[RMDB]
RNA sequence: GGGAACGACUCGAGUAGAGUCGAAAACGGCUAUAAUGCCGGCUAGCCGAUCGGCGCGCUAAUUAUAUAGCCGCGAUUAAUUAAUCGAUGCGCAUUACGAUUAAUCGGCCGGCAUGCCGCGGCUACGCCAACGAUAGUCUUUCGAGACUAUCGUUGGAAAAGAAACAACAACAACAAC
Reactivity to 2A3 in 0.01 (KOAc 150mM, MgCl2 10mM, bicine 150mM(pH8.5), 24C), signal-to-noise 4, nucleotides 027 to 126: c010g000g020c000u030a010u060a300a110u100g000c010c000g010g000c010u020a030g050c050c080g050a050u050c050g160g120c010g010c030g000c020u030a070a070u300u110a230u080a070u050a270g000c010c010g010c000g000a010u030u070a050a020u010u040a010a020u040c050g030a080u130g090c130g000c150a070u160u210a080c020g010a000u000u030a040a020u040c020g020g010c020c010g010g000c000a000u020g000c000c010g010c050g060g000c020u040a060c060g020
Reactivity to DMS in 0.01 (KOAc 150mM, MgCl2 10mM, bicine 150mM(pH8.5), 24C), signal-to-noise 4, nucleotides 027 to 126: c020g000g000c010u010a190u000a170a040u000g020c020c020g000g010c020u000a080g040c120c100g000a020u000c040g020g030c040g020c160g010c030u000a020a090u000u010a130u000a110u010a030g010c020c010g010c050g010a050u010u000a100a040u010u000a010a020u000c050g000a180u010g000c170g010c120a150u010u010a180c050g000a020u010u000a010a040u010c080g000g010c010c020g000g020c000a010u000g020c030c010g020c030g000g000c060u010a070c220g000